[RMDB]
RNA sequence: GGGAACGACUCGAGUAGAGUCGAAAAAUGGAAAAAGCGAUGCAGCUGUCACACGGAAUUGGAUACGAGGAAUAUGGACGCCGGCUGGAAACAAGAAUGAAAGUAGAGCGGCAGAGAGAGCUUGAAACAGCUGACUUUCGUUCGCGGAAGUUAGCUGAAAAGAAACAACAACAACAAC
Reactivity to DMS in 0.01 (KOAc 150mM, MgCl2 10mM, bicine 150mM(pH8.5), 24C), signal-to-noise 9, nucleotides 027 to 126: a070u030g010g010a050a060a070a090a060g010c040g000a090u020g010c050a060g010c040u000g010u010c050a070c090a090c080g000g010a070a070u010u010g000g010a070u020a050c090g000a070g000g010a070a080u020a070u010g000g000a080c080g010c040c030g000g010c020u000g000g000a070a050a060c090a070a090g010a070a070u020g010a060a060a080g010u010a080g000a100g000c040g000g010c030a040g000a090g000a080g010a110g010c030u000u010g000a110a070a130
Reactivity to 2A3 in 0.01 (KOAc 150mM, MgCl2 10mM, bicine 150mM(pH8.5), 24C), signal-to-noise 9, nucleotides 027 to 126: a000u070g020g040a070a060a010a030a030g070c060g040a040u100g040c030a020g020c030u050g030u120c010a020c010a020c080g040g030a060a090u080u090g030g040a030u050a120c040g010a050g030g050a080a050u120a080u150g030g010a010c040g000c040c010g040g000c010u020g020g030a030a070a030c030a030a030g090a060a090u180g050a130a040a010g030u060a010g010a010g030c020g030g010c040a000g020a000g000a000g000a010g020c010u050u060g040a080a040a010